[RMDB]
RNA sequence: GGGAACGACUCGAGUAGAGUCGAAAAGGCGGGGCGUUCGCGCCCCGCCAAAGUCGGUAUGCGUAAUAAUUAAUCGUACGCAUCGAUUAAUAUCCGACAAUAAAAGCCGAUCAUUCGUGAUCGGCAACUAUAUAUGCAAUUUCGAUUGCAUAUAUAGAAAAGAAACAACAACAACAAC
Reactivity to 2A3 in 0.01 (KOAc 150mM, MgCl2 10mM, bicine 150mM(pH8.5), 24C), signal-to-noise 2, nucleotides 027 to 126: g040g030c030g120g120g000g020c040g060u090u090c210g050c020g040c150c000c020c040g000c000c000a030a000a020g000u010c000g020g000u090a030u050g040c030g030u000a000a040u050a080a050u210u220a040a100u190c130g020u040a030c080g000c040a020u030c010g010a050u080u140a070a070u030a040u000c020c000g070a040c040a030a000u160a070a080a010a000g000c000c000g000a010u000c000a010u020u160c160g090u040g000a000u000c000g000g000c000a000a000
Reactivity to DMS in 0.01 (KOAc 150mM, MgCl2 10mM, bicine 150mM(pH8.5), 24C), signal-to-noise 1, nucleotides 027 to 126: g050g120c030g170g110g080g140c020g060u010u000c210g040c010g260c030c000c050c040g160c000c000a000a010a080g000u000c000g030g020u000a060u010g000c040g000u000a030a030u000a100a120u050u000a070a100u010c180g020u000a030c110g010c050a040u000c040g010a020u020u030a070a080u020a080u000c000c000g000a010c030a160a050u000a040a070a110a180g000c000c000g000a050u000c000a050u020u020c090g010u010g000a000u000c000g000g010c020a020a040

This 177-nucleotide RNA was probed chemically with 2A3 and DMS.
The DMS profile rests on 1,070 reads.
High 2A3 reactivity points to a flexible backbone, as in loops and unpaired stretches.
DMS adducts were read by reverse transcription with MarathonRT.
The 2A3 profile rests on 1,492 reads.